[RMDB]
RNA sequence: GGGAACGACUCGAGUAGAGUCGAAAAAAGGAAUUAGCGUGCCUUCAUGCUAAGGGUUUGAUAUCUGCUAAAACCCGGUGCAUUCAUCAAUGCAGGUUAAGCCAAAGGGAUGUCCUGACCGGAGGCCAAAAGUUCGCUACGUUCGCGUAGCGAACAACGAUACUCACCGGUUCGCCGGUGAGUAUCGAAAAGAAACAACAACAACAAC
Reactivity to DMS in 0.01 (KOAc 150mM, MgCl2 10mM, bicine 150mM(pH8.5), 24C), signal-to-noise 2, nucleotides 027 to 156: a080a010g000g000a120a140u000u000a200g000c010g060u000g010c060c050u010u000c060a090u000g010c060u020a210a270g000g000g000u000u000u010g000a110u000a040u010c060u010g030c090u000a040a020a040a020c000c000c000g000g090u000g010c020a040u000u010c050a100u000c100a120a240u000g020c020a040g050g010u000u000a090a080g000c010c010a010a280a230g000g000g000a070u020g000u000c000c040u000g000a170c020c010g000g040a300g130g000c020c060a020a040a100a080g000u000u000c000g040c030u000a010c000g020u010u010c270g040c080g070u000a010g010c000g000a000a000c000a020a040
Reactivity to 2A3 in 0.01 (KOAc 150mM, MgCl2 10mM, bicine 150mM(pH8.5), 24C), signal-to-noise 2, nucleotides 027 to 156: a000a020g100g020a070a060u100u050a040g000c020g060u050g040c060c060u130u270c030a050u090g020c030u030a030a070g030g000g000u020u010u000g070a040u040a070u100c050u030g000c020u070a040a030a030a010c010c040c030g020g040u140g000c010a070u070u080c010a030u080c050a080a170u170g020c040a000g040g000u020u080a030a000g010c000c010a020a020a010g050g020g010a010u090g060u050c010c010u010g080a000c000c010g020g000a000g000g000c000c000a030a150a000a010g000u000u000c000g000c000u000a010c000g000u010u040c180g000c000g140u000a000g000c020g000a000a000c000a000a000